[RMDB]
The record gives the reactivity of an RNA of 177 nucleotides to DMS and 2A3.
For DMS, 3,575 sequencing reads were counted.

RNA sequence: GGGAACGACUCGAGUAGAGUCGAAAAGGUGGAGUCGCGUUUUUCGCGCUCACUUUUCUUUACAUCGGGAACAUACUUCCCUUGUAUGACGGUUUUUCCGCCGAUGUAGUGAGCGACGACACCGAAAGGGAAAUGAUGAGUUCGCUCAUCAUUUCCCAAAAGAAACAACAACAACAAC
Reactivity to DMS in 0.01 (KOAc 150mM, MgCl2 10mM, bicine 150mM(pH8.5), 24C), signal-to-noise 2, nucleotides 027 to 126: g010g020u000g000g000a080g000u010c050g000c110g000u020u000u000u030u000c010g000c080g020c010u020c020a000c000u000u010u040u020c030u000u000u000a020c010a010u010c140g010g000g040a130a070c170a090u000a080c140u020u010c020c030c010u000u040g000u010a000u000g030a230c010g000g000u000u010u030u030u000c000c000g000c020c010g030a000u010g000u000a010g020u000g010a010g060c030g020a080c020g000a080c060a000c010c030g000a070a170a100
Reactivity to 2A3 in 0.01 (KOAc 150mM, MgCl2 10mM, bicine 150mM(pH8.5), 24C), signal-to-noise 3, nucleotides 027 to 126: g000g040u040g010g030a090g020u080c040g020c090g040u000u010u010u110u150c010g020c010g000c010u000c010a000c000u130u070u050u010c070u080u070u040a020c010a020u020c050g020g040g000a070a070c010a090u120a150c090u100u130c000c000c000u020u050g010u000a010u000g040a020c030g030g000u050u060u020u130u070c000c020g000c020c010g020a030u060g000u010a020g000u000g010a020g000c000g190a250c000g000a000c000a010c020c000g010a070a000a020
The data come from the RNA Mapping Database (RMDB), library OK1LIB.